[RMDB]
RNA sequence: GGGAACGACUCGAGUAGAGUCGAAAAGAAUGCGGCCCUGGUGGCGCAGAUGGCGAGCGACGGCGUGCCCAUGCUGGAUAACGGCGUGCCCAUCAAGUACAUCGGCCCGCGGGAAAGCUUCACCGACCUUUAUCUAACAGUUCGCUGUUAGAUAAAGAAAAGAAACAACAACAACAAC
Reactivity to DMS in 0.01 (KOAc 150mM, MgCl2 10mM, bicine 150mM(pH8.5), 24C), signal-to-noise 9, nucleotides 027 to 126: g010a070a040u000g020c010g020g010c300c010c010u000g020g020u000g020g020c050g000c050a050g010a040u000g000g000c040g010a260g010c090g010a070c210g000g010c020g030u000g000c010c010c180a300u000g010c070u000g000g010a080u000a080a150c100g000g000c010g030u000g010c030c010c010a180u000c040a060a150g000u000a040c030a040u010c030g000g010c040c010c040g010c090g010g000g000a060a270a190g010c030u000u000c020a210c030c010g000a120c200
Reactivity to 2A3 in 0.01 (KOAc 150mM, MgCl2 10mM, bicine 150mM(pH8.5), 24C), signal-to-noise 9, nucleotides 027 to 126: g030a030a040u220g010c010g010g020c010c000c020u090g140g070u130g030g000c070g000c050a020g010a020u010g010g020c070g020a110g040c110g080a090c010g010g040c010g010u020g010c010c000c010a080u230g040c100u190g060g090a130u080a180a030c030g030g000c010g010u010g000c000c000c000a020u060c010a010a050g010u040a050c000a020u000c000g010g000c000c010c000g010c050g010g000g010a020a040a010g000c010u030u040c050a080c050c020g110a140c000